The data come from the RNA Mapping Database (RMDB), library M2RFPK. The record gives the reactivity of an RNA of 207 nucleotides to 2A3. The RNA was probed in 150 mM KOAc, 10 mM MgCl2 and 150 mM bicine (pH 8.5) at 24 C. The 2A3 profile rests on 663 reads.
RNA sequence: GGGAACGACUCGAGUAGAGUCGAAAAAAUGCCGCCUCAGUUCCAAGCUCUUUCGUCGCACUGUAAACAGUCCUAUUGAGUUAGGGGCAGUCAACCACGUUGCGAAGCUAAAUUAUCUGGUCGAGAGUUACGAUUCCCUACUUCGGUAGGGAAUCAACCACGAACAUUACUUCGGUAAUGUUCGUGGAAAAGAAACAACAACAACAAC
Reactivity to 2A3 in 0.01 (KOAc 150mM, MgCl2 10mM, bicine 150mM(pH8.5), 24C), signal-to-noise 1, nucleotides 027 to 156: a020a030u090g060c040c020g000c010c000u080c030a030g030u040u010c040c010a020a060g040c040u050c000u040u110u030c020g060u080c030g000c000a060c060u050g020u200a070a100a060c020a010g010u000c000c030u030a040u090u120g020a090g000u060u040a030g000g000g010g020c000a000g050u020c000a030a060c040c010a020c080g060u050u040g030c010g040a020a020g000c010u090a060a120a100u190u110a150u120c130u050g030g060u020c020g020a000g000a000g130u050u060a110c050g000a010u000u020c040c000c000u000a000c000u020u040c110g050g000u000a000g000g000g020a000a000u000c000a010a000